[RMDB]
RNA sequence: GGGAACGACUCGAGUAGAGUCGAAAAAUGAAGUGGAAGUCGAGCAAUCGGAGGGGAGUUCCGCCCUUUGCAGGAGUUGUCCCUCUUUCUCUCUUGGUAUGGAAGAAUAAGCUUGCCAGCCCGAGAGCCAACCUUAUUGGUUCGCCAAUAAGGUUGGAAAAGAAACAACAACAACAAC
Reactivity to DMS in 0.01 (KOAc 150mM, MgCl2 10mM, bicine 150mM(pH8.5), 24C), signal-to-noise 1, nucleotides 027 to 126: a110u010g010a090a090g050u000g020g000a130a050g010u000c020g040a210g010c070a070a070u000c110g030g010a060g020g000g030g010a100g000u000u000c020c040g020c020c070c060u000u000u000g020c090a120g050g010a050g020u000u000g000u000c000c000c030u000c060u010u000u000c070u010c020u000c000u000u000g010g000u030a060u000g000g000a030a050g000a010a030u000a160a050g000c200u000u000g000c010c020a060g000c090c000c080g000a010g000a030g010